[RMDB]
RNA sequence: GGGAACGACUCGAGUAGAGUCGAAAAGAAACCGGUCAGAUUAGGUUUUUAAUCUAAUCUGACCGAUAGCUUUAAUAGUGAGGUAAGCUUUAAUAUAGCACUCCUAAUUCAUAACGCUACACUCGUGCUUAAAUGUCAAGUUCGCUUGACAUUUAAGAAAAGAAACAACAACAACAAC
Reactivity to DMS in 0.01 (KOAc 150mM, MgCl2 10mM, bicine 150mM(pH8.5), 24C), signal-to-noise 4, nucleotides 027 to 126: g000a050a110a050c090c000g010g000u000c000a010g000a020u000u000a000g000g000u000u000u010u010u010a050a010u000c000u000a000a000u000c000u000g010a000c000c000g010a010u010a020g010c010u000u010u000a090a130u000a010g000u010g000a020g010g010u000a090a090g020c000u000u000u000a120a120u010a150u000a030g010c000a210c030u000c000c010u000a030a120u010u000c100a090u000a070a110c140g000c040u000a070c140a080c060u000c060g010u000g010
Reactivity to 2A3 in 0.01 (KOAc 150mM, MgCl2 10mM, bicine 150mM(pH8.5), 24C), signal-to-noise 5, nucleotides 027 to 126: g030a020a080a020c040c010g020g000u000c000a000g010a000u000u010a000g020g030u030u030u050u100u300a010a010u000c000u000a000a000u010c000u010g000a000c000c000g000a000u000a000g000c000u070u040u040a080a060u060a060g130u150g040a020g060g080u160a210a060g000c000u070u070u070a240a090u250a040u080a060g000c000a010c040u020c010c000u040a080a080u120u040c050a030u040a140a030c050g020c030u050a030c050a020c060u050c040g070u100g050